[RMDB]
Structure probing data (DMS and 2A3) for a 177-nucleotide construct. The data come from the RNA Mapping Database (RMDB), libraries RFM100 and RFMREP. DMS adducts were read by reverse transcription with MarathonRT.
RNA sequence: GGGAACGACUCGAGUAGAGUCGAAAAUAUUUGUAUUCGAACUAGUCCAAGCCGAUUCUCAAAAUCAUAUAAAAUCAUUUACACCUUGGUCAUGGUAGCUAAGAAUAUUGUAUCUAAAAUUGGGGAGAUAACAAUACGGAUUCGUCCGUAUUGUUAUAAAAGAAACAACAACAACAAC
Reactivity to DMS in 0.01 (KOAc 150mM, MgCl2 10mM, bicine 150mM(pH8.5), 24C), signal-to-noise 8, nucleotides 027 to 126: u020a060u010u020u010g010u020a070u010u010c030g010a100a080c040u000a050g010u000c000c060a060a050g000c080c040g010a070u000u010c030u010c070a070a080a090a080u040c100a060u020a120u030a070a070a060a060u030c050a080u010u010u000a070c120a070c140c020u000u010g000g010u010c030a090u010g010g010u010a050g000c060u000a050a080g010a040a070u010a050u010u010g010u000a050u010c040u010a030a020a050a100u010u000g000g000g010g000a130g000
Reactivity to 2A3 in 0.01 (KOAc 150mM, MgCl2 10mM, bicine 150mM(pH8.5), 24C), signal-to-noise 9, nucleotides 027 to 126: u120a050u050u150u130g060u030a100u010u050c020g020a050a000c020u010a010g100u010c020c000a020a000g020c020c020g100a130u090u020c050u010c030a070a120a070a110u110c060a030u080a030u110a170a100a050a070u070c030a030u060u080u110a060c060a040c020c010u030u040g040g010u040c060a100u050g050g000u040a030g020c040u050a070a040g020a070a010u060a030u060u090g040u040a070u040c090u120a060a080a140a150u090u060g030g000g000g000a090g010
Conditions: 150 mM KOAc, 10 mM MgCl2 and 150 mM bicine (pH 8.5), 24 C. 2A3 adducts were read by reverse transcription with SuperScript II with manganese.